[RMDB]
Structure probing data (2A3 and DMS) for a 307-nucleotide construct.
Conditions: 150 mM KOAc, 10 mM MgCl2 and 150 mM bicine (pH 8.5), 24 C.
2A3 adducts were read by reverse transcription with SuperScript II with manganese.
The DMS profile rests on 3,707 reads.
The data come from the RNA Mapping Database (RMDB), library POS240.
For 2A3, 2,578 sequencing reads were counted.
RNA sequence: GGGAACGACUCGAGUAGAGUCGAAAAGUGUCACUACGGUGACACAAGAUUGUCUUCGGACAAUCAGAUUCGCGUGAGCGAAUCAGGCGAACUACGGUUCGCCACUACAAAAACAUAAAACAUAAUACAAUGGUCGUGAGACCAUUGACACGUGACUACGGUCACGUGACGAAUUCCGUUCGCGGAAUUCGAGGGAUACAGGACUGGCGGAUUAGUGGGAAACCACGUGGACUGUAUCCGAAAAAAAGCCGACCGCCUGGGCAUCAAAGCUAUUCUUCGGAAUAGCUAAAAGAAACAACAACAACAAC
Reactivity to 2A3 in 0.01 (KOAc 150mM, MgCl2 10mM, bicine 150mM(pH8.5), 24C), signal-to-noise 2, nucleotides 027 to 266: g000u010g000u010c010a000c020u050a030c250g080g000u000g000a020c000a000c000a010a030g000a000u020u000g000u000c010u040u010c300g040g000a020c000a010a000u000c010a010g000a000u020u020c010g020c040g060u130g050a100g000c000g000a000a000u000c000a030g000g000c010g000a000a000c030u060a030c220g110g000u000u010c000g030c020c040a010c020u100a030c040a060a130a080a070a000c060a090u300a060a120a040a000c050a050u300a210a040u150a220c000a010a000u000g000g010u010c000g060u080g110a070g000a030c000c000a000u010u000g020a010c000a000c000g000u010g000a000c000u010a050c280g090g010u010c000a000c010g000u000g040a000c010g000a000a000u000u000c000c000g020u010u040c240g020c010g130g000a000a000u010u000c000g010a030g050g040g000a000u000a000c010a000g020g090a020c030u060g020g070c040g000g090a150u150u160a120g000u020g000g020g030a040a050a070c000c010a000c030g030u040g020g020a010c000u010g000u000a000u010c000c000g070a030a010a000a000a000a010a000g000c000c000g040a040c020c000g000c000c000u050g030g010g000c020a020u080c120a080a180
Reactivity to DMS in 0.01 (KOAc 150mM, MgCl2 10mM, bicine 150mM(pH8.5), 24C), signal-to-noise 1, nucleotides 027 to 266: g000u010g000u000c000a000c000u000a110c180g050g020u000g000a000c000a030c010a090a090g010a030u020u020g010u010c000u000u010c160g000g040a020c010a010a000u000c000a140g000a010u010u000c000g020c000g070u050g010a260g010c000g020a020a000u000c000a080g000g010c000g010a000a000c000u010a160c180g030g000u010u000c000g040c000c000a010c170u030a140c180a070a110a050a130a100c170a190u020a100a070a110a210c180a090u020a120a070u000a210c000a040a000u020g010g010u000c000g000u060g000a240g000a000c000c000a010u010u010g000a170c010a010c010g020u010g020a010c000u010a080c080g010g000u000c000a000c000g020u000g000a030c000g000a020a010u000u000c000c010g010u000u000c170g030c000g000g000a000a000u010u000c000g010a100g010g040g000a030u010a050c040a010g000g010a060c020u000g000g020c050g000g000a210u010u020a110g000u000g000g010g010a160a170a130c000c030a000c000g000u020g020g010a040c000u030g000u000a000u020c000c000g010a000a000a060a060a120a090a270g010c050c030g010a100c050c020g000c030c000u000g020g010g020c030a120u000c140a030a100